Annotation: The record gives the reactivity of an RNA of 177 nucleotides to DMS and 2A3. 2A3 adducts were read by reverse transcription with SuperScript II with manganese.
RNA sequence: GGGAACGACUCGAGUAGAGUCGAAAAUAAAUGGUUAAGGAGUUGUUCAUGAAGAAACAAAAUUUAUUUUUAGUCCUGUUAAGUGUCUUUCUUUUGUGCUUGGGGGCUUGUGGUCAAAAGGAAAGUCCAUAGCAUGCUGGUUCGCCAGCAUGCUAUGAAAAGAAACAACAACAACAAC
Reactivity to DMS in 0.01 (KOAc 150mM, MgCl2 10mM, bicine 150mM(pH8.5), 24C), signal-to-noise 2, nucleotides 027 to 126: u000a040a040a040u020g010g000u040u010a090a130g010g000a090g000u010u000g010u010u000c060a080u050g030a160a070g000a120a050a040c070a070a040a060a040u000u020u040a000u000u000u000u010u000a110g010u000c000c000u000g020u030u020a080a100g010u000g000u000c080u000u010u000c010u000u010u000u000g000u030g010c020u000u020g020g000g020g000g010c030u020u030g020u000g020g030u000c060a080a100a020a050g010g010a010a040a060g020u020c050
Reactivity to 2A3 in 0.01 (KOAc 150mM, MgCl2 10mM, bicine 150mM(pH8.5), 24C), signal-to-noise 2, nucleotides 027 to 126: u040a000a000a030u100g080g030u120u190a170a120g140g040a060g020u070u050g020u050u130c060a030u240g070a110a150g050a050a090a090c080a000a090a040a040u030u130u140a020u000u000u030u140u300a020g030u010c000c000u000g020u140u050a130a030g040u060g000u070c030u010u030u000c000u000u040u060u070g090u020g010c020u010u090g000g000g020g000g100c050u060u000g010u020g040g060u000c020a000a080a000a000g090g030a040a050a000g000u010c000
High DMS reactivity at an A or C suggests that its Watson-Crick edge is free. For DMS the reverse transcriptase was MarathonRT. Conditions: 150 mM KOAc, 10 mM MgCl2 and 150 mM bicine (pH 8.5), 24 C. Source: RMDB library OK1LIB, as collected in RNAgym.